The record gives the reactivity of an RNA of 207 nucleotides to DMS and 2A3. For 2A3 the reverse transcriptase was SuperScript II with manganese. The reactions ran in a buffer of 150 mM KOAc, 10 mM MgCl2 and 150 mM bicine (pH 8.5), at 24 C. Source: RMDB library M2RFPK, as collected in RNAgym.
RNA sequence: GGGAACGACUCGAGUAGAGUCGAAAACCUACUCAAUACGUCCUCGUCGUACAGAACGGUAACAUGUUUUCCGAACAUCCGCGCUUGGAUAUACGAGUAUACACCUUACCCAACCCUCGCCAACGGGAGUGCAUCCACGAGUUCGCUCGUGGAUGAAUCCUUGAAAUCAGUUCGCUGAUUUCAAGGAAAAAGAAACAACAACAACAAC
Reactivity to DMS in 0.01 (KOAc 150mM, MgCl2 10mM, bicine 150mM(pH8.5), 24C), signal-to-noise 2, nucleotides 027 to 156: c000c020u000a020c020u030c030a080a150u000a070c030g020u000c000c000u000c050g040u010c090g020u000a070c070a050g000a150a270c030g010g000u000a060a100c100a130u000g010u000u000u010u000c020c030g030a100a090c030a050u000c000c030g030c060g020c050u000u020g030g020a060u010a050u010a050c110g000a050g020u000a080u000a070c070a080c050c030u000u000a070c020c010c000a080a080c020c020c020u010c020g040c080c040a050a140c070g010g020g000a100g030u000g030c010a020u000c010c000a000c010g020a000g010u000u010c300g020c000u010c000g070u000g010g030a020u000g000a050a060
Reactivity to 2A3 in 0.01 (KOAc 150mM, MgCl2 10mM, bicine 150mM(pH8.5), 24C), signal-to-noise 6, nucleotides 027 to 156: c000c010u010a000c010u030c020a060a110u060a150c100g010u000c020c010u040c020g140u030c010g020u090a060c080a120g080a160a040c020g000g000u080a060a050c080a180u190g060u050u030u040u030c010c010g020a060a030c040a090u070c050c050g030c010g000c060u050u050g020g010a010u030a010u030a070c040g000a000g040u010a010u050a020c070a060c000c040u120u170a090c030c020c010a030a070c040c000c000u040c060g070c080c040a090a070c040g040g000g000a040g040u100g030c000a000u000c000c000a000c000g010a000g000u060u080c120g060c120u000c000g000u000g000g000a000u000g000a000a010